[RMDB]
An RNA of 207 nucleotides, treated with 2A3 and read out base by base. Values cover nucleotides 27 to 156. The 2A3 profile rests on 459 reads. The reactions ran in a buffer of 150 mM KOAc, 10 mM MgCl2 and 150 mM bicine (pH 8.5), at 24 C.
RNA sequence: GGGAACGACUCGAGUAGAGUCGAAAAGAGCGAUUAGACAAAGGGGUAGAGCUACAUAUUAGAUAGCUGUAUAACCGUUCAAGUUACAUCAAAACAUCUUCAAUAUUUAUUACUUACUUUCCUUUCUGCCAGAGUACGGUAUUCGUACCGUACUCAAAGACUCGGCAAUAUUCGUAUUGCCGAGUCUAAAAGAAACAACAACAACAAC
Reactivity to 2A3 in 0.01 (KOAc 150mM, MgCl2 10mM, bicine 150mM(pH8.5), 24C), signal-to-noise 1, nucleotides 027 to 156: g030a000g120c060g030a030u000u070a110g020a100c040a020a110a050g000g000g000g000u020a010g010a010g060c000u000a010c060a120u300a110u150u070a030g100a210u030a000g030c000u020g030u020a040u020a030a000c000c000g000u080u120c080a020a000g030u100u090a020c010a030u130c000a020a100a000a120c010a030u090c030u060u070c020a110a080u050a300u180u100u070a120u130u080a090c050u130u010a010c000u050u060u140c010c000u040u060u060c080u050g070c060c020a080g020a010g040u000a000c000g000g030u000a020u070u000c090g000u000a000c000c000g000u000a000c000u000c000a020a010